RNA sequence: GGGAACGACUCGAGUAGAGUCGAAAAAACGUUGCAUGAUCGUAAAACAUGCCCAGCUUACCGUGAGCCGCCUUUGAAAGAAAGGUUUACACGGACUCUGUUGCGUUACGCACGUACCUAACUUGUGAAAACGGCAUCUUGUUCGCAAGAUGCCGAAGCUCUACACAAGGUUCGCCUUGUGUAGAGCAAAAGAAACAACAACAACAAC
Reactivity to 2A3 in 0.01 (KOAc 150mM, MgCl2 10mM, bicine 150mM(pH8.5), 24C), signal-to-noise 2, nucleotides 027 to 156: a000a000c020g010u000u000g000c000a000u000g000a020u200c020g030u120a100a160a000a000c000a010u020g000c030c010c000a040g000c010u040u130a150c000c000g000u000g010a010g060c030c000g030c000c010u080u030u060g200a170a100a040g160a060a040a000g030g020u050u060u030a020c010a010c000g040g000a030c050u060c030u120g050u080u050g000c010g050u070u040a050c080g010c010a010c020g010u010a060c030c010u040a090a160c080u070u090g050u050g160a040a050a020a060c010g000g000c000a000u000c000u010u010g010u070u050c100g000c090a000a000g010a000u000g000c000c000g000a000a000